[RMDB]
Chemical mapping of a 177-nucleotide RNA with DMS and 2A3.
It was measured as part of the RMDB library TTRDES.
The 2A3 profile rests on 3,823 reads.
The RNA was probed in 150 mM KOAc, 10 mM MgCl2 and 150 mM bicine (pH 8.5) at 24 C.
RNA sequence: GGGAACGACUCGAGUAGAGUCGAAAAGAUAUGGAGUCAGGUCAGCAACAGCUUGUGUAUCGGAAACGAUACCAAGACAUGCUGCUGACUCCUAAGUCAAAUCUUCGGCAGUUCGCUGCCGAAGAAAGUUACAUCUGGGGUUCGCCCCAGAUGUAACAAAAGAAACAACAACAACAAC
Reactivity to DMS in 0.01 (KOAc 150mM, MgCl2 10mM, bicine 150mM(pH8.5), 24C), signal-to-noise 1, nucleotides 027 to 126: g010a020u000a070u020g000g000a000g010u000c000a010g020g040u010c010a000g000c010a220a210c140a200g030c000u000u000g000u000g030u000a000u010c020g010g010a020a010a030c000g010a000u010a000c000c000a010a020g030a020c040a090u010g020c000u000g020c000u000g000a000c000u030c030c000u010a000a070g000u000c000a110a190a150u000c000u010u000c000g000g000c000a030g000u000u030c300g030c010u010g000c010c000g000a000a000g010a020a020a030
Reactivity to 2A3 in 0.01 (KOAc 150mM, MgCl2 10mM, bicine 150mM(pH8.5), 24C), signal-to-noise 1, nucleotides 027 to 126: g000a000u020a020u080g000g000a000g010u020c000a000g140g210u300c020a010g040c050a090a240c060a290g030c020u080u040g080u030g020u280a010u010c000g000g000a030a000a010c010g000a000u020a010c020c000a000a010g000a050c070a190u300g000c000u020g010c030u000g010a000c000u030c010c000u000a000a010g000u000c020a050a010a300u000c000u000u020c000g020g000c000a010g000u030u140c190g120c130u000g000c000c020g000a000a010g010a000a000a020